About this RNA: An RNA of 177 nucleotides, treated with DMS and 2A3 and read out base by base. It was measured as part of the RMDB library TTRDEL. DMS (dimethyl sulfate) methylates the pairing face of unpaired adenines and cytosines. For 2A3, 11,762 sequencing reads were counted. The RNA was probed in 150 mM KOAc, 10 mM MgCl2 and 150 mM bicine (pH 8.5) at 24 C. For DMS, 5,835 sequencing reads were counted.
RNA sequence: GGGAACGACUCGAGUAGAGUCGAAAAGAUAUGGAACAGCGGGAGUCAUAUGCUACUCGGAAACGAGUAGACCCAUAUAACGUUGAUCGCUGUUCCUAAGUCAAAGACCAACGUUCGCGUUGGUCAAGAUACUGAGAAACUUCGGUUUCUCAGUAUCAAAAGAAACAACAACAACAAC
Reactivity to DMS in 0.01 (KOAc 150mM, MgCl2 10mM, bicine 150mM(pH8.5), 24C), signal-to-noise 5, nucleotides 027 to 126: g010a040u000a300u010g000g010a030a000c010a000g010c010g000g000g000a040g020u000c030a020u000a020u010g010c000u000a000c010u000c000g000g000a110a130a190c000g010a010g000u000a000g000a210c200c300c040a010u000a000u000a030a030c020g010u000u010g010a050u000c010g000c010u000g000u000u000c000c000u000a010a060g000u000c050a110a120a100g000a010c000c000a000a010c000g020u000u000c240g020c020g000u000u000g000g010u000c010a010a040
Reactivity to 2A3 in 0.01 (KOAc 150mM, MgCl2 10mM, bicine 150mM(pH8.5), 24C), signal-to-noise 3, nucleotides 027 to 126: g000a000u030a020u080g000g000a000a000c000a000g020c010g010g040g040a060g060u040c030a060u030a000u090g000c000u000a000c000u000c000g000g010a060a050a020c000g000a000g000u000a010g000a020c040c010c020a040u050a010u020a080a070c130g140u220u080g000a020u080c000g000c000u010g000u000u000c000c000u000a030a010g010u010c020a140a140a000g000a000c000c000a000a010c010g030u070u090c300g010c010g090u010u000g060g000u000c000a000a020